This 207-nucleotide RNA was probed chemically with DMS and 2A3. 2A3 adducts were read by reverse transcription with SuperScript II with manganese.
[RMDB]
RNA sequence: GGGAACGACUCGAGUAGAGUCGAAAAGUGCCAGAGAAGUUGUAUAUUGGGCUACCAUCCAGUGAUGCAAUGGAGGCUUAUUAGGGUUGUCAGUUUUCCACAGGGUAGGAAUUAAAACUGUCUGAAAAAAACGAAACCACCUUCGGGUGGUUUCGAACAUACAAUUCAACUUCGGUUGAAUUGUAUGAAAAGAAACAACAACAACAAC
Reactivity to DMS in 0.01 (KOAc 150mM, MgCl2 10mM, bicine 150mM(pH8.5), 24C), signal-to-noise 2, nucleotides 027 to 156: g050u010g020c000c050a120g010a210g020a130a220g010u000u000g010u000a110u000a090u000u000g020g010g040c050u000a210c100c070a120u010c020c010a090g000u000g010a100u000g020c030a040a060u010g000g010a270g010g000c030u010u000a060u000u000a080g000g020g050u000u010g000u000c020a030g010u000u000u020u010c020c040a070c080a160g000g000g030u000a050g000g000a060a090u000u000a070a110a090a110c040u010g000u000c020u000g000a010a000a050a090a140a090a210c020g000a020a000a010c000c010a010c000c000u000u010c300g070g030g050u010g000g000u000u010u010c000g000a040a120
Reactivity to 2A3 in 0.01 (KOAc 150mM, MgCl2 10mM, bicine 150mM(pH8.5), 24C), signal-to-noise 3, nucleotides 027 to 156: g020u020g010c000c010a040g010a000g020a300a020g020u040u030g040u060a040u020a020u070u080g010g020g010c030u070a090c040c010a030u040c010c000a030g030u060g110a040u030g000c010a030a010u050g030g030a010g000g020c050u080u080a140u100u200a140g090g000g010u000u010g000u020c010a010g000u000u020u160u110c030c040a060c040a060g060g030g060u060a050g060g050a070a070u120u080a110a020a000a000c010u010g000u000c000u000g020a080a070a010a000a000a000a030c010g000a010a000a000c010c000a000c020c010u030u070c170g130g000g000u000g000g000u000u000u000c000g000a000a000
Notes:
The RNA was probed in 150 mM KOAc, 10 mM MgCl2 and 150 mM bicine (pH 8.5) at 24 C. Source: RMDB library M2RFPK, as collected in RNAgym.